This 207-nucleotide RNA was probed chemically with DMS and 2A3. For 2A3, 1,060 sequencing reads were counted. The reactions ran in a buffer of 150 mM KOAc, 10 mM MgCl2 and 150 mM bicine (pH 8.5), at 24 C. DMS (dimethyl sulfate) methylates the pairing face of unpaired adenines and cytosines.

[RMDB]
RNA sequence: GGGAACGACUCGAGUAGAGUCGAAAAGAGGGAGGGAGCAGGCCACGGUUCAAGGGCUGCAGACUCUUAGGCUUCUUACCAAGGCCUAGUGGAUUUUCUUGAAUAAAGAUUUCUUUGUUUGUUCUGUAUCCCUAGACAAUUUCCAGAGACUGUGAAAACUAAUGGAGGUAUUCGUACCUCCAUUAGUAAAAGAAACAACAACAACAAC
Reactivity to DMS in 0.01 (KOAc 150mM, MgCl2 10mM, bicine 150mM(pH8.5), 24C), signal-to-noise 2, nucleotides 027 to 156: g020a120g020g010g020a090g000g040g000a130g050c030a050g050g030c010c020a100c070g020g020u020u010c050a110a100g000g020g020c000u020g030c040a080g010a080c020u010c090u000u000a030g020g010c020u000u010c070u000u000a160c110c110a150a090g030g010c020c010u010a070g020u010g010g010a100u010u010u000u000c000u020u010g030a090a130u000a100a060a080g000a210u010u000u000c020u010u000u020g010u020u000u000g000u000u000c020u000g040u000a100u010c010c000c000u000a090g010a100c040a090a140u000u000u000c010c020a050g030a100g010a070c020u000g000u010g020a080a100a110
Reactivity to 2A3 in 0.01 (KOAc 150mM, MgCl2 10mM, bicine 150mM(pH8.5), 24C), signal-to-noise 2, nucleotides 027 to 156: g090a050g000g040g010a100g030g010g020a020g030c070a050g020g040c040c010a040c090g070g000u110u110c040a040a030g000g010g020c000u020g000c020a020g020a040c010u030c000u070u010a000g010g000c000u030u030c020u050u060a060c020c020a010a040g000g030c000c000u010a010g020u070g040g010a050u030u040u100u060c030u030u030g030a040a030u200a110a050a010g000a010u060u110u020c010u060u200u080g160u140u080u060g060u130u020c010u010g010u010a070u040c010c000c000u010a010g020a010c010a040a120u100u090u060c040c020a000g010a040g000a080c030u160g030u190g100a050a280a000